[RMDB]
RNA sequence: GGGAACGACUCGAGUAGAGUCGAAAAGUCGGGUUCGCCCGACCGACGCACCUUUGUGUUUCGCGAAGAACGUACUGUAGCUCGGCCAGGCCCAUUGGGCCUGGAUCGAGCCGUACGGGAGCGAAACACUCUGGUUGACAUACGCGUUCGCGCGUAAGAGAAGGCAUUUAUUCGUAAAUGCCUUCUCAAAAGAAACAACAACAACAAC
Reactivity to DMS in 0.01 (KOAc 150mM, MgCl2 10mM, bicine 150mM(pH8.5), 24C), signal-to-noise 1, nucleotides 027 to 156: g000u000c000g010g000g010u000u000c300g000c030c000c020g020a010c020c020g020a110c040g010c090a060c000c000u000u000u000g000u000g000u010u000u000c000g040c000g000a140a170g000a100a150c000g010u000a010c010u020g060u000a080g050c010u000c000g010g010c010c010a010g020g040c000c010c000a300u000u000g100g030g040c010c000u010g000g010a000u000c010g030a000g030c000c020g020u000a000c020g020g000g010a160g000c010g000a030a020a020c010a000c000u000c040u000g010g020u010u010g020a240c070a160u000a020c030g030c010g020u000u000c220g020c030g030c000g020u000a060a180
Reactivity to 2A3 in 0.01 (KOAc 150mM, MgCl2 10mM, bicine 150mM(pH8.5), 24C), signal-to-noise 4, nucleotides 027 to 156: g000u010c020g000g010g020u070u150c210g130c050c000c000g000a000c000c010g040a010c030g020c020a010c010c000u000u020u030g000u010g010u010u000u000c010g000c010g080a140a090g010a070a000c010g020u010a000c020u170g080u240a030g010c000u000c000g020g010c010c000a000g000g000c000c010c050a220u240u300g010g000g000c000c000u000g020g000a010u010c000g000a000g000c000c000g000u000a000c000g000g000g010a010g000c010g000a000a000a000c000a010c000u000c010u000g000g000u020u110g030a020c000a060u110a010c010g040c000g030u050u090c170g000c000g000c020g120u070a160a000
The record gives the reactivity of an RNA of 207 nucleotides to DMS and 2A3.
For DMS, 3,590 sequencing reads were counted.
High 2A3 reactivity points to a flexible backbone, as in loops and unpaired stretches.
Reactivities are given for positions 27 through 156.
For 2A3 the reverse transcriptase was SuperScript II with manganese.